[RMDB]
RNA sequence: GGGAACGACUCGAGUAGAGUCGAAAAGAUAUGGACUGGUUACCAGCCAACAGCUUAAUCGGAAACGAUUAAGACAUGGCUGUAGCAGUCCUAAGUCAAAAGCACACAGCGUUCGCGCUGUGUGCAACUUACUUGACAUGUUCGCAUGUCAAGUAAGAAAAGAAACAACAACAACAAC
Reactivity to 2A3 in 0.01 (KOAc 150mM, MgCl2 10mM, bicine 150mM(pH8.5), 24C), signal-to-noise 5, nucleotides 027 to 126: g020a010u070a070u150g000g010a000c020u060g230g110u300u060a070c100c090a030g000c020c010a080a070c090a150g060c010u000u010a010a000u010c000g030g030a080a050a070c020g000a010u010u010a010a000g030a020c020a100u080g000g000c010u000g010u010a010g020c000a000g000u000c000c000u010a110a000g060u020c030a040a030a080a180g010c000a000c000a000c000a000g000c000g070u110u190c290g040c000g000c150u000g020u000g010u000g000c010a000a010
Reactivity to DMS in 0.01 (KOAc 150mM, MgCl2 10mM, bicine 150mM(pH8.5), 24C), signal-to-noise 6, nucleotides 027 to 126: g010a030u000a300u010g010g000a000c000u000g010g010u020u000a080c300c140a010g010c000c000a020a120c300a200g000c000u000u000a000a010u000c000g010g000a190a140a210c000g020a010u000u000a000a000g010a040c110a190u000g000g020c010u000g010u000a030g010c000a030g000u000c000c000u000a020a070g010u000c040a080a070a110a120g000c000a010c000a010c010a000g000c010g020u000u020c300g030c010g020c000u010g000u010g030u010g000c010a000a020
The record gives the reactivity of an RNA of 177 nucleotides to 2A3 and DMS. DMS adducts were read by reverse transcription with MarathonRT. For 2A3, 19,213 sequencing reads were counted. The reactions ran in a buffer of 150 mM KOAc, 10 mM MgCl2 and 150 mM bicine (pH 8.5), at 24 C. It was measured as part of the RMDB library TTRDES.